An RNA of 207 nucleotides, treated with DMS and 2A3 and read out base by base.
The DMS profile rests on 1,688 reads.
Conditions: 150 mM KOAc, 10 mM MgCl2 and 150 mM bicine (pH 8.5), 24 C.
For 2A3 the reverse transcriptase was SuperScript II with manganese.
RNA sequence: GGGAACGACUCGAGUAGAGUCGAAAAAACUGGCAAUGCAAAGACCCUGAGUCAGGUACAUGUUUGGUGAGUUCAUGGAACAGCAGAGAGUCCAGGCUGGUUGGAGCAGAGUAAGCAGGUUUGGGAGUAGGGAUGUGGUCAGAGAGGAAAUAAGCAAAUUCGCCAUAUGUUUCGACAUAUGGCGAAUAAAAGAAACAACAACAACAAC
Reactivity to DMS in 0.01 (KOAc 150mM, MgCl2 10mM, bicine 150mM(pH8.5), 24C), signal-to-noise 1, nucleotides 027 to 156: a070a030c060u000g010g020c070a130a100u000g000c050a060a080a230g000a120c000c010c020u010g020a170g040u000c080a010g030g030u000a030c140a050u000g000u000u030u000g030g030u000g000a130g030u010u000c020a130u010g010g010a100a080c040a030g070c040a170g000a120g000a150g010u010c030c030a110g000g010c010u000g030g010u000u000g020g040a210g000c000a060g010a070g010u010a020a090g010c030a090g000g000u000u000u020g150g000g000a100g040u000a070g000g000g030a100u000g020u020g000g000u000c040a050g020a120g020a040g040g020a030a050a090u000a090a080g010c000a040a100
Reactivity to 2A3 in 0.01 (KOAc 150mM, MgCl2 10mM, bicine 150mM(pH8.5), 24C), signal-to-noise 1, nucleotides 027 to 156: a050a000c130u080g030g010c070a130a120u110g000c020a150a000a000g100a080c020c020c050u040g030a040g010u040c050a030g000g010u020a020c030a080u060g060u090u100u100g040g010u000g040a130g020u020u120c070a070u090g040g010a030a060c030a050g030c010a020g030a010g000a000g040u010c020c050a010g000g060c000u060g040g020u080u030g000g000a000g020c050a040g010a000g050u020a080a060g000c030a010g040g000u050u080u090g000g000g000a020g000u050a020g070g010g000a000u090g070u030g110g020u050c010a040g020a010g010a000g020g040a080a000a010u160a090a020g170c060a110a030